[RMDB]
RNA sequence: GGGAACGACUCGAGUAGAGUCGAAAAUACUUUGCCCAAAGGUGAUCCCGAUGUGGGUAUCGGCUUGGUAGGUGCUCCCGCCUGUGGCGAUGUUAUGCGCCUUGCUAUUCGUGUCAAUAAGGAUGGUGUUAUUGAGGACGUAAAGUUCAAGACCUUACAUCCUACUAUACUUCGGUAUAGUAGGAUGAAAAGAAACAACAACAACAAC
Reactivity to DMS in 0.01 (KOAc 150mM, MgCl2 10mM, bicine 150mM(pH8.5), 24C), signal-to-noise 2, nucleotides 027 to 156: u010a030c080u000u010u010g030c010c000c030a100a090a070g000g010u000g010a080u000c020c000c020g020a170u020g030u000g010g010g020u010a040u000c060g010g030c030u040u000g020g020u000a060g000g030u000g010c070u010c010c030c020g010c100c000u000g030u010g010g020c010g000a090u000g010u000u000a130u010g010c070g040c020c010u000u000g010c060u000a150u010u000c030g030u010g010u000c030a060a130u010a070a100g030g020a070u010g010g100u010g030u000u000a140u000u000g000a130g000g020a060c020g000u000a060a060a140g030u010u000c040a040a110g000a100c050c030u010u000a200
Reactivity to 2A3 in 0.01 (KOAc 150mM, MgCl2 10mM, bicine 150mM(pH8.5), 24C), signal-to-noise 4, nucleotides 027 to 156: u260a050c020u050u030u110g010c010c010c000a070a020a010g070g020u040g020a090u060c000c000c020g020a150u190g080u190g150g000g030u030a050u070c050g030g010c010u010u060g030g010u090a100g000g010u040g030c040u030c020c020c000g020c000c030u150g040u100g030g000c010g020a070u080g080u210u120a100u240g030c030g000c000c000u020u150g030c010u060a090u080u130c050g000u000g070u100c040a040a060u090a100a030g080g010a050u090g010g000u030g000u070u020a040u090u080g040a070g030g040a000c020g040u110a130a030a120g020u070u050c060a050a030g060a070c000c000u000u000a010